The record gives the reactivity of an RNA of 177 nucleotides to DMS and 2A3.
For 2A3 the reverse transcriptase was SuperScript II with manganese.
The reactions ran in a buffer of 150 mM KOAc, 10 mM MgCl2 and 150 mM bicine (pH 8.5), at 24 C.
For 2A3, 747 sequencing reads were counted.
RNA sequence: GGGAACGACUCGAGUAGAGUCGAAAAGACUCGGACGGAAUCUGAUCGUAACGUCUUUGGCAGGAUUGCUUUACCGCUUUCCGUCUGGCAAACAUUUAACUGUUAACUAUGAACUGGUACGGACAAGAUCUCACCACGUCUUCGGACGUGGUGAGAUAAAAGAAACAACAACAACAAC
Reactivity to DMS in 0.01 (KOAc 150mM, MgCl2 10mM, bicine 150mM(pH8.5), 24C), signal-to-noise 2, nucleotides 027 to 126: g000a000c080u020c090g000g050a010c060g030g000a100a010u000c010u080g000a000u060c050g060u000a000a220c190g040u030c030u000u000u030g000g030c120a050g040g000a060u000u030g010c080u010u000u030a100c190c070g000c090u000u040u010c030c030g010u000c000u010g000g030c300a170a020a070c050a000u000u070u010a050a130c140u030g000u000u000a230a100c150u000a000u010g000a040a120c140u030g030g050u000a000c040g010g000a050c190a030a010g000
Reactivity to 2A3 in 0.01 (KOAc 150mM, MgCl2 10mM, bicine 150mM(pH8.5), 24C), signal-to-noise 2, nucleotides 027 to 126: g040a000c050u040c080g020g020a000c000g000g060a020a060u060c040u050g090a000u120c000g020u070a000a040c000g060u000c000u010u020u010g050g000c000a000g050g040a180u000u100g000c000u050u100u060a020c010c010g060c060u040u000u000c000c070g060u020c000u030g120g000c040a080a090a000c010a100u090u060u060a220a080c090u030g090u120u040a030a070c040u080a080u090g060a030a070c020u030g060g030u050a000c000g080g040a050c060a210a080g050